The data come from the RNA Mapping Database (RMDB), library M2RFPK. The record gives the reactivity of an RNA of 207 nucleotides to 2A3. Conditions: 150 mM KOAc, 10 mM MgCl2 and 150 mM bicine (pH 8.5), 24 C. The 2A3 profile rests on 898 reads.
[RMDB]
RNA sequence: GGGAACGACUCGAGUAGAGUCGAAAAAGCCAUACCAUUACGAUGGUAUGGCAAGUCCGUGACGGCGAUGGAUCCCGCCUGGCCGAUGCCGAAUUGCCGAUCUGGCUGAUGGUUCCUGCCCCGUCAAAAAACGUAAAGCACUUCGGUGCUUUACGAACGAUAGAGAUCGCUUCGGCGAUCUCUAUCGAAAAGAAACAACAACAACAAC
Reactivity to 2A3 in 0.01 (KOAc 150mM, MgCl2 10mM, bicine 150mM(pH8.5), 24C), signal-to-noise 2, nucleotides 027 to 156: a020g000c000c000a030u000a000c000c000a030u040u060a090c170g080a010u020g020g040u010a020u010g010g010c000a000a000g010u000c020c000g030u010g000a010c000g010g050c110g040a040u020g000g020a000u030c010c000c010g080c040c010u020g010g050c010c000g080a040u080g160c080c060g240a230a120u170u210g040c030c010g050a060u040c040u090g030g000c030u070g050a260u170g020g000u010u040c010c000u040g030c040c000c000c030g040u010c000a030a050a030a030a030a030c010g000u000a000a000a000g020c000a030c040u030u130c240g110g010u000g000c000u000u000u000a000c000g000a010a000